[RMDB]
RNA sequence: GGGAACGACUCGAGUAGAGUCGAAAAGGAUGAUCUGGUCCCGGCCAGUUAUCCGAAUUAGUACCGGGAUUGCAUCGUCGAGCCGUCAGGGGCGAAGACGAGAACCUGAAAGCACGAAGCACUGGGCGGUGCGCGUGCGAGAUAUAACGCCCAACAACAUACGGACUGACUUCGGUCAGUCCGUAUGAAAAGAAACAACAACAACAAC
Reactivity to DMS in 0.01 (KOAc 150mM, MgCl2 10mM, bicine 150mM(pH8.5), 24C), signal-to-noise 1, nucleotides 027 to 156: g010g050a100u000g000a030u000c030u000g020g000u000c020c130c160g010g010c000c030a040g010u000u000a080u010c010c070g030a010a110u000u000a140g030u000a110c030c000g010g030g010a080u000u000g040c140a110u000c010g000u000c030g040a300g000c020c020g030u000c130a240g000g020g030g010c010g010a030a190g000a140c040g010a100g000a020a050c070c020u000g030a130a120a130g000c000a030c030g030a080a110g010c100a030c000u040g000g010g010c090g070g020u000g000c000g060c020g010u000g000c020g000a040g000a080u000a100u000a030a060c010g030c000c000c000a110a120c040a040a250
Reactivity to 2A3 in 0.01 (KOAc 150mM, MgCl2 10mM, bicine 150mM(pH8.5), 24C), signal-to-noise 1, nucleotides 027 to 156: g000g000a000u060g000a030u100c030u080g040g000u050c060c040c010g000g020c010c000a020g020u040u010a010u030c000c020g000a030a010u240u070a130g090u060a090c030c000g010g000g000a050u100u130g040c060a040u000c040g000u020c030g010a000g010c000c000g140u230c160a080g230g000g050g000c000g030a060a000g000a000c000g030a000g000a010a010c030c030u060g050a140a010a040g010c000a000c000g010a210a010g000c010a000c050u050g000g000g000c000g000g000u010g010c020g000c010g000u000g000c040g040a000g000a010u150a020u030a110a020c050g000c000c000c050a000a040c030a020a010